[RMDB]
RNA sequence: GGGAACGACUCGAGUAGAGUCGAAAAACGGUCAUAUACGUAUGACCGAAUGAGCAUAACAGGUCCACCCCAAAGCGUUCACAUUGUGGCCCCUGUCAGAUUCUGGUAAAUCUGCGAGUUCUGCUAAAUUAGGUAACUCUCUUCGGAGAGUUACCAAGUAACCGUAAAAGUUCGCUUUUACGGUUACAAAAGAAACAACAACAACAAC
Reactivity to DMS in 0.01 (KOAc 150mM, MgCl2 10mM, bicine 150mM(pH8.5), 24C), signal-to-noise 2, nucleotides 027 to 156: a150c020g000g000u010c010a030u000a070u000a110c190g030u000a020u000g010a030c000c010g010a040a030u000g010a110g000c030a140u000a070a060c060a050g010g010u000c000c080a090c010c010c000c000a030a060a160g030c040g010u000u000c000a060c060a160u010u000g030u000g000g000c060c100c010c040u010g000u000c030a070g010a090u000u000c020u030g040g030u010a050a040a030u000c020u000g020c000g000a140g000u000u000c110u010g000c030u010a080a060a080u040u000a090g000g080u000a000a020c000u000c000u010c010u000u000c300g040g010a040g000a030g000u000u000a000c000c000a010a050
Reactivity to 2A3 in 0.01 (KOAc 150mM, MgCl2 10mM, bicine 150mM(pH8.5), 24C), signal-to-noise 2, nucleotides 027 to 156: a000c000g000g000u000c020a000u050a000u010a070c180g100u010a000u000g000a010c000c000g000a010a060u090g010a000g020c060a050u050a180a000c000a030g000g040u010c000c010a020c010c000c000c020a020a130a050g080c070g040u120u130c040a080c060a140u100u130g030u030g030g010c000c030c010c010u030g030u070c010a010g010a050u040u010c010u160g020g020u070a050a060a100u020c010u010g010c020g020a040g050u090u030c080u020g050c040u060a040a110a180u180u120a090g000g000u000a000a000c000u000c000u010c010u070u040c140g050g000a010g000a000g000u000u000a000c000c000a010a000